[RMDB]
Chemical mapping of a 177-nucleotide RNA with 2A3 and DMS. The data come from the RNA Mapping Database (RMDB), library M2PK90. The reactions ran in a buffer of 150 mM KOAc, 10 mM MgCl2 and 150 mM bicine (pH 8.5), at 24 C.
RNA sequence: GGGAACGACUCGAGUAGAGUCGAAAAGUAAAGGGCGAACGAGCGCUAAUGCGCAUGCUAGAAAAUGGUAGGCCAUCGUAGUGUGAGCAUGAGCACGAAAGAAACACACACAUGCACGUGCAAAAAAACCCACAAUUUGAUUCGUCAAAUUGUGGGUAAAAGAAACAACAACAACAAC
Reactivity to 2A3 in 0.01 (KOAc 150mM, MgCl2 10mM, bicine 150mM(pH8.5), 24C), signal-to-noise 1, nucleotides 027 to 126: g040u100a050a000a140g030g010g000c050g010a060a060c040g010a080g000c040g020c070u100a080a050u090g000c010g000c020a020u030g010c040u080a060g050a070a080a040a030u080g070g020u030a070g060g080c000c000a020u020c020g030u000a050g030u010g000u020g050a010g040c020a010u040g030a000g010c020a000c070g030a060a070a030g070a050a080a000c040a000c000a000c000a000c010a020u100g000c010a010c090g110u120g000c060a000a120a000a000a000a000
Reactivity to DMS in 0.01 (KOAc 150mM, MgCl2 10mM, bicine 150mM(pH8.5), 24C), signal-to-noise 2, nucleotides 027 to 126: g020u000a030a060a120g010g020g050c010g010a080a050c050g000a170g020c040g000c010u000a090a040u000g010c010g000c010a020u010g000c050u010a040g000a080a040a110a020u000g010g020u010a090g010g020c000c010a030u000c070g000u010a030g030u000g030u000g010a050g030c000a020u000g020a070g010c010a060c080g000a030a070a070g020a050a080a080c070a050c070a040c040a060c050a040u000g010c050a050c070g010u010g000c030a000a030a060a050a100a080